[RMDB]
RNA sequence: GGGAACGACUCGAGUAGAGUCGAAAAUGCCGGCUCCGGAUACGUGAGGGUGACAGGAGAGAGAUGACAUGACGAUGCCGCUACGAGGACUUGGCCCGCCCGAUGACACCGGUGUGCGCGAGGUGUCCUAAAGUUCAAGCUUCGGCUUGAACUUUAGAAAAGAAACAACAACAACAAC
Reactivity to DMS in 0.01 (KOAc 150mM, MgCl2 10mM, bicine 150mM(pH8.5), 24C), signal-to-noise 3, nucleotides 027 to 126: u010g020c010c020g010g020c050u010c020c010g000g010a110u010a050c100g030u010g010a140g000g010g020u000g010a110c060a070g000g000a080g010a110g020a070g020a070u000g000a080c070a050u000g000a140c100g000a080u000g010c020c000g020c050u000a070c080g000a090g010g010a090c070u000u010g020g020c020c010c060g010c030c010c030g000a130u000g000a030c040a030c020c020g000g000u000g000u000g000c070g010c070g000a130g010g000u000g000u010c020
Reactivity to 2A3 in 0.01 (KOAc 150mM, MgCl2 10mM, bicine 150mM(pH8.5), 24C), signal-to-noise 2, nucleotides 027 to 126: u070g010c010c010g030g010c000u030c010c010g100g010a090u090a200c050g030u060g080a020g030g070g050u070g020a040c030a030g070g010a030g000a010g000a000g010a060u060g040a050c060a080u080g010a010c070g070a030u060g010c000c020g030c070u040a040c060g040a040g080g020a050c010u040u100g090g010c000c000c000g040c030c000c010g040a090u120g020a000c000a000c080c000g000g020u070g030u050g030c070g000c010g010a030g000g010u000g010u070c000

An RNA of 177 nucleotides, treated with DMS and 2A3 and read out base by base. For 2A3, 2,037 sequencing reads were counted. 2A3 adducts were read by reverse transcription with SuperScript II with manganese. The DMS profile rests on 3,590 reads. As a SHAPE reagent, 2A3 marks flexible, mostly unpaired nucleotides at the ribose 2'-OH. The RNA was probed in 150 mM KOAc, 10 mM MgCl2 and 150 mM bicine (pH 8.5) at 24 C. High DMS reactivity at an A or C suggests that its Watson-Crick edge is free. The data come from the RNA Mapping Database (RMDB), library OK2TRN.